[RMDB]
RNA sequence: GGGAACGACUCGAGUAGAGUCGAAAAAAAUCGGAGUAAAAAGUAGGGCGACGUUUUGUUAAUUCCUCAUAUGUAUCAGUUGCCAGGCAAGCGCGAUCACCUUCAUAGCACACAACUCGCUUACCAUUGGCGCGGCUUAUUGCAACGACGCGAUAAGUCAUAUUAGCGCCUUCGGGCGCUAAUAUGAAAAAGAAACAACAACAACAAC
Reactivity to DMS in 0.01 (KOAc 150mM, MgCl2 10mM, bicine 150mM(pH8.5), 24C), signal-to-noise 1, nucleotides 027 to 156: a020a110a050u000c010g000g030a160g010u010a070a070a110a120a160g000u000a070g000g010g030c050g040a050c080g020u000u010u000u010g010u000u020a080a100u000u010c020c010u010c160a040u010a070u010g030u000a040u010c040a070g000u000u000g050c020c050a130g010g030c000a060a030g050c040g010c090g010a140u010c050a070c010c000u010u000c020a070u000a050g040c110a060c050a070c080a090a180c040u000c030g000c010u010u000a050c010c030a280u030u000g010g060c020g010c030g030g020c040u000u000a010u000u020g010c030a090a190c050g000a060c100g000c030g050a030u000a030a070g000
Reactivity to 2A3 in 0.01 (KOAc 150mM, MgCl2 10mM, bicine 150mM(pH8.5), 24C), signal-to-noise 1, nucleotides 027 to 156: a000a000a100u050c010g000g020a050g020u080a140a110a050a070a000g080u150a090g000g020g030c050g040a010c010g010u040u040u090u030g020u040u040a130a040u090u100c040c010u060c020a030u090a040u180g090u020a040u050c010a040g050u050u050g040c010c010a000g010g000c010a000a010g010c010g010c010g000a040u110c050a100c120c000u090u100c100a100u100a100g030c050a000c000a000c000a230a140c040u040c040g000c000u010u020a020c020c000a040u030u100g030g000c040g010c010g010g000c000u030u010a040u030u020g040c000a110a080c100g120a040c110g050c000g000a040u030a060a000g070
Chemical mapping of a 207-nucleotide RNA with DMS and 2A3. For 2A3, 519 sequencing reads were counted. The reactions ran in a buffer of 150 mM KOAc, 10 mM MgCl2 and 150 mM bicine (pH 8.5), at 24 C.